[RMDB]
RNA sequence: GGGAACGACUCGAGUAGAGUCGAAAAGAAACCAUAUACGAGGCGGCGUAUAUGGACCGCCGAAAGAAAGAAAGAAAGAAACGUAGUGUGCGGCCUCGCACUACGGAAAGGCCGAGAAAGAAAGAAAGGAUAUGAGAUACUUCGGUAUCUCAUAUCCAAAAGAAACAACAACAACAAC
Reactivity to 2A3 in 0.01 (KOAc 150mM, MgCl2 10mM, bicine 150mM(pH8.5), 24C), signal-to-noise 2, nucleotides 027 to 126: g040a030a050a000c000c000a010u030a000u020a090c010g000a050g080g000c100g030g000c000g030u040a010u010a010u070g020g010a030c000c000g060c000c010g020a020a030a000g080a030a040a000g100a000a050a010g140a060a120a000g080a030a080a000c000g000u000a000g000u000g010u010g030c050g050g000c020c000u050c020g010c000a000c010u010a000c000g010g010a050a060a000g020g000c000c000g010a010g080a040a080a000g110a050a070a010g100a060a040a010
Reactivity to DMS in 0.01 (KOAc 150mM, MgCl2 10mM, bicine 150mM(pH8.5), 24C), signal-to-noise 3, nucleotides 027 to 126: g000a140a050a200c000c000a050u030a010u010a010c010g000a130g000g000c020g000g010c010g030u000a040u000a020u000g020g010a100c030c010g010c010c050g020a070a050a160g000a150a060a080g000a050a100a100g030a080a090a130g020a090a060a110c030g000u010a030g000u000g020u000g000c080g000g000c050c020u010c020g000c000a000c000u010a000c010g000g010a010a080a060g000g000c020c020g000a120g000a070a070a040g000a090a040a100g000a080a100a100